[RMDB]
This 207-nucleotide RNA was probed chemically with 2A3 and DMS. The RNA was probed in 150 mM KOAc, 10 mM MgCl2 and 150 mM bicine (pH 8.5) at 24 C. Reactivities are rounded to 0.1 and cut off at 0 and 3. For DMS the reverse transcriptase was MarathonRT.
RNA sequence: GGGAACGACUCGAGUAGAGUCGAAAAGGUCGCACCCAACCACGUUAAAUAGGGUGCAAAAACACAACUGCCAACGAAUACGCCUACGCUUUGGCAGCCUAAGCGUGCUGCCACGCACCUUUAGACCUUGCCUGUGGGUCUAAAGGUGUGUGACCUACUCAUAAGGAUUGUUCGCAAUCCUUAUGAGAAAAGAAACAACAACAACAAC
Reactivity to 2A3 in 0.01 (KOAc 150mM, MgCl2 10mM, bicine 150mM(pH8.5), 24C), signal-to-noise 9, nucleotides 027 to 156: g020g010u070c080g010c000a010c020c000c010a020a040c030c030a120c150g080u110u220a060a060a070u140a160g010g010g010u030g000c020a060a020a010a050a000c100a020c030a080a080c040u050g020c020c010a040a020c060g050a090a040u130a120c070g070c030c040u080a050c060g040c110u090u060u030g000g000c000a000g000c000c020u120a120a030g050c040g060u080g030c040u040g020c010c000a010c000g000c000a000c000c000u000u000u000a000g000a000c000c000u020u090g070c030c040u100g030u110g020g000g000u000c000u000a000a000a010g000g000u010g000u000g000u010g000a000c000c010u040a070
Reactivity to DMS in 0.01 (KOAc 150mM, MgCl2 10mM, bicine 150mM(pH8.5), 24C), signal-to-noise 3, nucleotides 027 to 156: g020g020u000c040g050c000a100c000c010c010a120a140c050c020a110c130g020u000u010a060a070a070u020a090g000g050g000u000g020c020a010a030a080a090a050c080a070c040a060a030c020u000g010c010c000a030a080c060g020a120a130u000a070c110g020c040c040u000a060c060g000c030u000u010u000g010g000c000a020g010c010c020u000a100a110g010c070g020u000g000c070u000g010c010c000a020c010g030c000a030c000c000u010u000u010a000g010a020c010c000u000u010g030c100c050u010g030u000g010g020g010u010c000u000a000a020a010g010g030u000g010u000g010u000g010a030c010c080u000a180